RNA sequence: GGGAACGACUCGAGUAGAGUCGAAAACAAAACUGACCAACUAUGAGGUCAUACAUCGUCAUAGCAAAACAAAACAAAACUGACCAGAUAUGAGGUCAUACAUCGUCAUAACAAACAAAACAACAAACGACCCAGCUAAUUUCGAUUAGCUGGGUCGAAAAGAAACAACAACAACAAC
Reactivity to 2A3 in 0.01 (KOAc 150mM, MgCl2 10mM, bicine 150mM(pH8.5), 24C), signal-to-noise 1, nucleotides 027 to 126: c000a000a060a030a020c120u000g030a040c000c000a060a060c000u070a000u110g060a060g000g000u000c060a000u160a050c000a060u000c060g040u030c000a000u110a060g000c020a000a160a000a110c090a000a240a000a000c080a020a080a000a020c000u000g000a000c040c000a020g090a090u160a000u300g280a150g030g000u000c000a000u090a060c070a000u020c030g230u020c050a000u060a030a060c090a020a020a020c050a060a190a040a000c000a010a010c060a040a040a040

The record gives the reactivity of an RNA of 177 nucleotides to 2A3. Conditions: 150 mM KOAc, 10 mM MgCl2 and 150 mM bicine (pH 8.5), 24 C. It was measured as part of the RMDB library OK1LIB. Values cover nucleotides 27 to 126.